Notes:
This 177-nucleotide RNA was probed chemically with DMS and 2A3. Reactivities are given for positions 27 through 126.
RNA sequence: GGGAACGACUCGAGUAGAGUCGAAAAGGGUGUCGGUCGGGGGGGAAAGGCACCGGGAGAAGGCUGCGGCCUCGUUCCAGGAGAACCCAGUGUCCCCAACAGACCCGGGGACGUGGGAUCCCAGGCCUAAGUACUGAUGCUUCGGCAUCAGUACUUAAAAAGAAACAACAACAACAAC
Reactivity to DMS in 0.01 (KOAc 150mM, MgCl2 10mM, bicine 150mM(pH8.5), 24C), signal-to-noise 2, nucleotides 027 to 126: g000g000g010u010g020u020c090g030g000u010c040g040g020g030g100g000g020g010a080a070a060g010g000c050a100c040c020g000g020g010a080g010a090a040g000g000c060u000g020c190g040g000c010c040u010c020g010u000u000c000c020a160g030g000a100g000a060a060c000c000c000a030g020u030g000u000c000c000c000c000a090a080c220a200g030a140c190c180c120g000g020g000g000a000c010g000u000g000g000g020a030u000c000c010c040a090g000g000c000c070
Reactivity to 2A3 in 0.01 (KOAc 150mM, MgCl2 10mM, bicine 150mM(pH8.5), 24C), signal-to-noise 2, nucleotides 027 to 126: g030g000g020u050g040u150c000g040g020u100c030g050g000g010g080g020g050g040a060a010a030g070g000c030a040c030c010g000g020g020a080g060a070a010g010g000c020u030g030c030g080g010c020c010u000c050g020u020u010c010c000a000g010g060a120g000a060a080c000c000c000a010g130u080g010u110c000c000c000c000a050a050c000a060g120a150c000c090c170g020g020g000g000a000c000g020u030g020g000g000a020u000c000c000c000a010g020g010c010c010